[RMDB]
RNA sequence: GGGAACGACUCGAGUAGAGUCGAAAAGGUUUGGCAUCACCCCGUCCAUAGAUCGCCCCCGUAGUGUGUUUCGGCCGAUCUGGCUGGUUCCGUGUUGCCUCCGCCACAUCCGCAUCUCUUCCACCGGCGUAAUCAGUUUCUUCGGAAACUGAUUACGAAAAGAAACAACAACAACAAC
Reactivity to 2A3 in 0.01 (KOAc 150mM, MgCl2 10mM, bicine 150mM(pH8.5), 24C), signal-to-noise 6, nucleotides 027 to 126: g070g010u090u090u060g030g020c020a020u030c020a070c000c010c000c020g050u050c020c020a070u080a100g040a060u050c030g040c010c010c000c000c020g040u050a080g050u060g050u040g040u150u100u100c020g020g000c050c030g010a040u020c030u050g010g000c030u020g040g000u120u040c030c010g020u000g030u050u050g020c000c000u020c010c000g020c010c010a040c010a030u030c010c020g010c010a040u010c020u010c000u100u000c010c020a040c010c020g050g000
Reactivity to DMS in 0.01 (KOAc 150mM, MgCl2 10mM, bicine 150mM(pH8.5), 24C), signal-to-noise 4, nucleotides 027 to 126: g010g000u010u020u010g010g020c080a050u010c060a070c030c040c040c040g030u000c020c050a120u020a030g010a070u020c080g020c020c030c070c040c030g010u000a030g010u030g030u020g010u000u010u010c030g010g020c080c030g030a090u030c040u010g020g000c020u000g010g010u010u020c030c100g010u040g030u010u000g010c020c020u000c040c060g000c010c030a050c080a050u010c020c030g000c030a050u000c030u010c050u000u000c010c020a070c080c050g010g020
An RNA of 177 nucleotides, treated with 2A3 and DMS and read out base by base. The RNA was probed in 150 mM KOAc, 10 mM MgCl2 and 150 mM bicine (pH 8.5) at 24 C.